[RMDB]
RNA sequence: GGGAACGACUCGAGUAGAGUCGAAAAGAGGAUCUCUCGAUCGCGCGCAAGUUCAAAGCGGCCAAGAGUUUGCAGUGGACGACGCCCGGCAUGCUCGGAGGAAACGAGGUGCCGAGCUGGAAGGACAAUUCGGGGUCUAUUCUGCGUCGUAUCGUGCAGCUGUGAUACUUUUCGAAGUAUCACAGCUAAAAGAAACAACAACAACAAC
Reactivity to DMS in 0.01 (KOAc 150mM, MgCl2 10mM, bicine 150mM(pH8.5), 24C), signal-to-noise 1, nucleotides 027 to 156: g010a130g000g010a050u010c000u000c020u000c040g000a070u000c080g030c030g000c110g040c080a070a150g030u000u000c130a090a100a100g020c020g060g000c000c010a070a160g000a040g000u000u010u000g040c000a080g030u000g010g030a210c030g000a110c080g010c000c030c060g010g070c020a040u000g020c000u000c000g000g020a130g000g000a060a100a120c070g000a070g040g040u000g040c000c000g010a040g040c000u000g000g010a080a100g000g000a100c060a070a190u010u000c090g020g020g000g010u000c020u000a070u000u000c030u000g000c030g070u000c030g000u000a100u000c040g000u020g040c220
Reactivity to 2A3 in 0.01 (KOAc 150mM, MgCl2 10mM, bicine 150mM(pH8.5), 24C), signal-to-noise 4, nucleotides 027 to 156: g110a040g020g050a060u040c020u000c010u020c060g080a130u020c040g000c000g000c000g020c060a070a040g000u060u090c020a060a090a050g060c030g030g020c020c010a100a040g040a050g010u020u110u230g040c030a040g030u060g050g010a010c000g010a010c040g010c010c000c010g000g010c010a010u170g230c000u000c000g080g050a190g030g210a040a150a000c000g000a010g010g000u010g000c010c000g000a000g000c040u020g000g030a030a010g020g030a020c030a090a150u150u090c110g040g000g030g060u000c010u040a280u040u020c020u030g010c000g000u050c000g020u040a040u070c030g030u070g020c040
Overview:
An RNA of 207 nucleotides, treated with DMS and 2A3 and read out base by base. Values are in units of 0.01, from 0 to 300, in steps of 10. The 2A3 profile rests on 2,602 reads. As a SHAPE reagent, 2A3 marks flexible, mostly unpaired nucleotides at the ribose 2'-OH. The reactions ran in a buffer of 150 mM KOAc, 10 mM MgCl2 and 150 mM bicine (pH 8.5), at 24 C.